Structure probing data (2A3 and DMS) for a 177-nucleotide construct. The DMS profile rests on 4,182 reads. High DMS reactivity at an A or C suggests that its Watson-Crick edge is free. 2A3 is a SHAPE reagent: it acylates the 2'-hydroxyl of flexible nucleotides of all four kinds. The RNA was probed in 150 mM KOAc, 10 mM MgCl2 and 150 mM bicine (pH 8.5) at 24 C.
[RMDB]
RNA sequence: GGGAACGACUCGAGUAGAGUCGAAAAGAUAUGGACGUGGUCAUCAUCUUUGAUCGUCCAGUCGGAAACGACUGUGACGGGAGAUGGCCACGUCCUAAGUCAAAAUCGCUUGCUUCGGCAAGCGAAACAUAUUCGCCAAGUUCGCUUGGCGAAUAUGAAAAGAAACAACAACAACAAC
Reactivity to 2A3 in 0.01 (KOAc 150mM, MgCl2 10mM, bicine 150mM(pH8.5), 24C), signal-to-noise 2, nucleotides 027 to 126: g010a000u000a000u020g000g000a000c000g000u020g000g010u000c000a040u000c000a080u050c160u300u300u300g090a060u040c020g000u000c010c000a000g000u000c030g010g000a000a020a000c010g030a010c010u090g190u300g050a000c000g010g000g010a300g010a010u000g000g000c000c000a000c000g000u000c010c000u000a010a010g000u000c000a000a000a010a140u080c010g000c000u000u020g000c000u050u050c210g170g000c000a000a000g010c000g000a000a000a000
Reactivity to DMS in 0.01 (KOAc 150mM, MgCl2 10mM, bicine 150mM(pH8.5), 24C), signal-to-noise 3, nucleotides 027 to 126: g000a000u000a010u010g000g000a010c010g020u000g000g010u000c020a090u000c090a300u010c200u000u010u010g010a180u000c000g000u010c010c010a010g030u000c000g000g000a010a010a020c000g010a010c000u000g020u020g030a010c000g010g000g000a070g010a010u010g000g020c020c010a010c000g000u010c000c010u000a000a040g000u000c000a110a090a130a160u000c010g010c000u010u000g000c000u010u020c300g010g010c000a000a010g010c000g020a010a070a130